[RMDB]
Chemical mapping of a 207-nucleotide RNA with 2A3 and DMS.
RNA sequence: GGGAACGACUCGAGUAGAGUCGAAAACGCUGGGAGUGUGCUAGACUACAGGGAGAUCCAAGGAGCUCUGAAGCGCGCACGGAGCUCCUUGGAUCGAAGAACUGUAGCGAACUAGCCACUCCUGUGCUGAAGCGCGCACGGCAACCGAAAGGUGCGAGGUAUUAAUACCGUUCGCGGUAUUAAUACCAAAAGAAACAACAACAACAAC
Reactivity to 2A3 in 0.01 (KOAc 150mM, MgCl2 10mM, bicine 150mM(pH8.5), 24C), signal-to-noise 2, nucleotides 027 to 156: c060g010c020u080g030g010g000a010g000u020g030u190g010c000u020a030g040a160c010u000a000c000a000g000g010g000a020g000a010u000c000c000a000a000g020g000a000g000c000u000c000u030g050a130a080g020c000g020c000g010c020a030c030g000g000a000g010c050u000c000c000u000u010g000g000a000u010c000g000a000a000g000a000a000c000u000g000u000a010g000c010g010a070a050c000u000a000g010c000c000a000c000u010c000c010u000g000u040g000c000u090g060a090a020g000c000g020c010g030c020a010c010g050g040c020a140a220c010c000g060a080a030a040g020g010u010g010c020g020a110
Reactivity to DMS in 0.01 (KOAc 150mM, MgCl2 10mM, bicine 150mM(pH8.5), 24C), signal-to-noise 2, nucleotides 027 to 156: c100g020c060u000g000g050g020a030g010u000g010u020g060c000u000a040g010a140c000u010a020c000a010g000g000g020a100g020a030u010c000c010a020a040g050g020a080g060c010u000c010u000g000a020a070g040c050g040c020g000c000a300c010g020g020a070g060c010u000c000c000u010u000g010g010a010u000c020g020a010a110g030a100a270c000u010g000u000a010g020c020g010a110a300c030u010a030g000c020c030a050c000u000c000c020u000g020u000g000c020u000g000a140a090g010c020g030c010g090c000a060c030g000g000c000a120a300c000c020g010a150a180a210g010g020u010g000c030g000a150
The reactions ran in a buffer of 150 mM KOAc, 10 mM MgCl2 and 150 mM bicine (pH 8.5), at 24 C. It was measured as part of the RMDB library RNAMAK.